Source information
Chemical mapping of a 177-nucleotide RNA with DMS.

[RMDB]
RNA sequence: GGGAACGACUCGAGUAGAGUCGAAAAACAGGGUUAUCAGCUACAACCCGACCGAAUCGGGAAGCUGGACCGUCACGGUGCGCAGUGUACGCAAGGAAGGCGACACCUGGGUGGAUGUCCCGGGCGACGUAAAGACCUGCUUCGGCAGGUCUUUACGAAAAGAAACAACAACAACAAC
Reactivity to DMS in 0.01 (KOAc 150mM, MgCl2 10mM, bicine 150mM(pH8.5), 24C), signal-to-noise 1, nucleotides 027 to 126: a140c130a120g000g000g000u000u000a140u040c010a020g010c020u030a060c220a130a040c000c000c000g010a090c110c140g000a060a300u020c010g000g030g020a050a070g010c000u000g010g020a020c010c030g040u010c060a060c040g020g000u000g010c040g060c000a070g010u010g000u010a060c030g000c190a000a050g000g000a160a040g020g000c000g020a200c010a070c000c010u030g010g010g010u000g010g010a120u000g000u000c020c030c000g000g000g030c100g080a110